[RMDB]
Record summary:
Chemical mapping of a 207-nucleotide RNA with DMS and 2A3. Source: RMDB library OK3TST, as collected in RNAgym. The 2A3 profile rests on 1,320 reads.
RNA sequence: GGGAACGACUCGAGUAGAGUCGAAAAUGGGAAACGGUGAAUAUUCCAACUCUCCACUAGGGCUUCUCUGAUACUACCCAGGCCAGCAGGAGGAUGUGGAGUUAAGAAAUCCUGGCUCCCCAUGUUGUCUCUACUAACACUGUGGAGAAGUGGGAUGACUGUACACUUCAUUCGUGAAGUGUACAGUAAAAGAAACAACAACAACAAC
Reactivity to DMS in 0.01 (KOAc 150mM, MgCl2 10mM, bicine 150mM(pH8.5), 24C), signal-to-noise 1, nucleotides 027 to 156: u020g030g060g000a120a090a100c120g030g050u000g020a060a170u000a130u010u000c010c000a120a080c020u020c010u000c000c010a010c040u000a080g000g020g030c030u010u000c020u010c030u000g000a230u000a040c080u000a090c020c020c040a170g040g020c020c030a130g020c030a070g040g010a120g030g010a090u020g030u020g040g000a070g020u000u000a120a150g000a080a080a090u000c020c000u010g000g010c040u010c000c010c020c010a150u000g010u010u010g010u000c000u000c030u010a100c070u000a090a190c050a060c090u000g000u000g010g010a030g000a030a090g040u000g020g000g000a150u020g010
Reactivity to 2A3 in 0.01 (KOAc 150mM, MgCl2 10mM, bicine 150mM(pH8.5), 24C), signal-to-noise 3, nucleotides 027 to 156: u060g010g010g010a020a140a070c140g030g020u100g070a140a060u110a110u200u010c050c000a060a130c040u000c000u020c030c010a020c040u080a050g040g090g020c030u080u050c050u010c020u040g030a040u040a230c030u060a100c020c040c030a010g000g030c010c020a030g060c100a050g040g010a000g030g020a030u060g050u050g050g000a010g000u030u070a110a020g020a040a100a030u040c040c010u000g020g070c040u060c000c020c000c000a000u020g080u080u040g050u040c020u000c000u060a030c000u010a120a020c070a050c180u030g010u030g050g000a030g000a060a050g010u060g000g030g000a050u080g030